The record gives the reactivity of an RNA of 207 nucleotides to 2A3. 2A3 adducts were read by reverse transcription with SuperScript II with manganese. It was measured as part of the RMDB library RSTRND. The RNA was probed in 150 mM KOAc, 10 mM MgCl2 and 150 mM bicine (pH 8.5) at 24 C. Values cover nucleotides 27 to 156. As a SHAPE reagent, 2A3 marks flexible, mostly unpaired nucleotides at the ribose 2'-OH.
[RMDB]
RNA sequence: GGGAACGACUCGAGUAGAGUCGAAAAUGCUGAUCAGUAGUGUCAGGCUGGAGGAUCGCUUGAGUCCAGGACCUGUGCAACAUAGCGAGACCCCGUCUCUUUGUUCUGGGCUGUAGUGCGCUAUGCAAUAGCCACUGCACUCCAGCGAUCGGGUGUCCUCUCACUUUCCGUUCGCGGAAAGUGAGAGAAAAGAAACAACAACAACAAC
Reactivity to 2A3 in 0.01 (KOAc 150mM, MgCl2 10mM, bicine 150mM(pH8.5), 24C), signal-to-noise 1, nucleotides 027 to 156: u100g000c010u030g020a010u080c020a060g220u250a050g040u080g000u110c020a000g020g020c010u060g040g010a070g070g010a070u030c020g030c070u000u140g070a010g050u020c000c000a000g000g050a120c000c010u090g090u150g060c000a050a080c040a040u130a050g020c020g050a000g090a090c000c000c020c120g000u040c040u000c000u040u250u190g090u190u020c020u010g020g000g100c020u000g010u000a000g000u010g000c150g050c100u030a000u110g190c020a100a170u000a000g020c000c000a000c000u000g000c000a010c000u000c000c000a000g000c010g010a020u040c060g030g000g000u140g010u000c000